[RMDB]
RNA sequence: GGGAACGACUCGAGUAGAGUCGAAAAAUUUUUCUUUCCAAGAGACGAAAUCUUUUGCUUUUAAUCAAAGUACAAGAAUAUUAGCUGCCGUUUGAGUUUUGGAGGAAAAGACAAACAUUAGCAAGGACCAUUUACCAGAUUUCGAUCUGGUAAAUGGAAAAGAAACAACAACAACAAC
Reactivity to 2A3 in 0.01 (KOAc 150mM, MgCl2 10mM, bicine 150mM(pH8.5), 24C), signal-to-noise 1, nucleotides 027 to 126: a000u050u070u000u010u080c000u250u260u000c000c000a020a050g090a040g000a070c010g010a070a000a120u020c000u000u050u000u000g000c000u050u020u020u120a080a140u200c050a030a000a000g000u020a030c000a030a000g050a060a030u060a040u210u150a010g000c050u070g050c070c060g070u030u090u060g080a130g050u170u150u010u000g000g000a010g000g000a000a000a000a000g000a010c020a040a140a000c010a050u070u160a000g100c050a050a030g010g010a040
Reactivity to DMS in 0.01 (KOAc 150mM, MgCl2 10mM, bicine 150mM(pH8.5), 24C), signal-to-noise 2, nucleotides 027 to 126: a110u010u000u000u000u000c010u020u000u000c000c010a050a100g000a060g000a060c050g010a090a150a050u000c020u000u000u000u000g010c010u000u000u000u000a080a160u010c290a020a020a010g020u000a030c070a050a050g010a060a090u010a090u000u000a150g000c030u010g020c090c020g000u000u010u000g000a150g000u000u000u000u000g010g000a120g010g000a030a050a050a040g010a110c080a090a060a090c060a100u010u010a110g010c090a060a090g000g000a280
Chemical mapping of a 177-nucleotide RNA with 2A3 and DMS. Conditions: 150 mM KOAc, 10 mM MgCl2 and 150 mM bicine (pH 8.5), 24 C. For 2A3, 876 sequencing reads were counted.